[RMDB]
RNA sequence: GGGAACGACUCGAGUAGAGUCGAAAACACUGAUGAGAGAACAGACAUGAAGCUCGCCUUCGUAAGAGCCCCAAGUAGAUCCUUGCGAUCUGCCGUUAGAAUAGCAACAGUGUACUCAUGGGCUUACUGAAUCUCCGUUAUUCGUAACGGAGAUUCAAAAAGAAACAACAACAACAAC
Reactivity to 2A3 in 0.01 (KOAc 150mM, MgCl2 10mM, bicine 150mM(pH8.5), 24C), signal-to-noise 6, nucleotides 027 to 126: c040a010c040u080g040a080u110g020a090g010a000g050a180a010c020a050g210a030c030a140u180g060a060a000g020c010u060c080g040c050c020u080u110c060g070u090a100a010g000a000g050c000c000c000c020a040a010g010u020a000g030a010u000c020c040u120u270g140c220g000a010u000c010u010g000c010c010g000u030u110a040g010a110a100u130a110g040c020a000a030c010a030g020u040g020u110a100c030u030c070a060u080g000g010g030c000u020u070a070c060
Reactivity to DMS in 0.01 (KOAc 150mM, MgCl2 10mM, bicine 150mM(pH8.5), 24C), signal-to-noise 5, nucleotides 027 to 126: c010a070c050u000g000a060u010g010a080g000a130g000a120a110c130a080g010a150c160a090u030g010a060a070g000c030u010c120g000c130c020u000u000c030g010u040a080a110g000a060g010c020c000c010c070a100a090g010u000a020g010a020u000c020c050u030u040g000c130g000a020u010c030u000g000c000c060g030u010u040a040g000a090a090u060a110g010c080a050a060c060a020g010u010g000u000a100c020u000c050a100u040g000g000g000c010u000u020a040c140
The record gives the reactivity of an RNA of 177 nucleotides to 2A3 and DMS. The RNA was probed in 150 mM KOAc, 10 mM MgCl2 and 150 mM bicine (pH 8.5) at 24 C. Reactivities are given for positions 27 through 126. The data come from the RNA Mapping Database (RMDB), library OK1LIB. The 2A3 profile rests on 4,378 reads. DMS adducts were read by reverse transcription with MarathonRT.